RNA sequence: GGGAACGACUCGAGUAGAGUCGAAAAGCAGCAUUGAGUAGCAGCCGGGUGUCGGCGAUGCGAUGCUUGAAACCCUCGGCCUGCUCCAGCAGCGCGUCGACCACCUGCGCGGGGUCCAGGGCCUUGCGCGCUCUACUAUGUUCGCAUAGUAGAGCGCAAAAGAAACAACAACAACAAC
Reactivity to DMS in 0.01 (KOAc 150mM, MgCl2 10mM, bicine 150mM(pH8.5), 24C), signal-to-noise 3, nucleotides 027 to 126: g020c000a060g000c020a080u050u020g020a090g020u030a130g020c060a100g020c030c000g020g000g000u020g010u030c030g010g000c000g010a090u060g010c130g010a030u010g000c010u000u000g020a070a070a080c030c000c000u020c070g000g000c040c000u000g000c020u010c040c060a100g020c000a030g010c060g000c050g020u000c070g000a060c120c040a150c050c010u000g020c010g000c050g010g000g000g010u000c090c060a110g020g020g030c070c000u030u020g000c250
Reactivity to 2A3 in 0.01 (KOAc 150mM, MgCl2 10mM, bicine 150mM(pH8.5), 24C), signal-to-noise 6, nucleotides 027 to 126: g050c050a000g000c030a060u050u110g070a070g100u140a010g030c110a010g030c000c010g040g020g060u160g100u160c030g020g000c010g030a010u070g030c050g100a090u160g000c010u060u060g020a120a070a040c000c000c010u020c040g020g000c010c020u020g000c010u020c020c010a010g010c030a020g030c000g000c010g110u070c010g010a100c000c030a040c020c010u040g000c020g000c060g020g010g000g000u000c030c050a100g000g020g030c000c000u040u040g030c030

Conditions: 150 mM KOAc, 10 mM MgCl2 and 150 mM bicine (pH 8.5), 24 C.
The record gives the reactivity of an RNA of 177 nucleotides to DMS and 2A3.
It was measured as part of the RMDB library OK1LIB.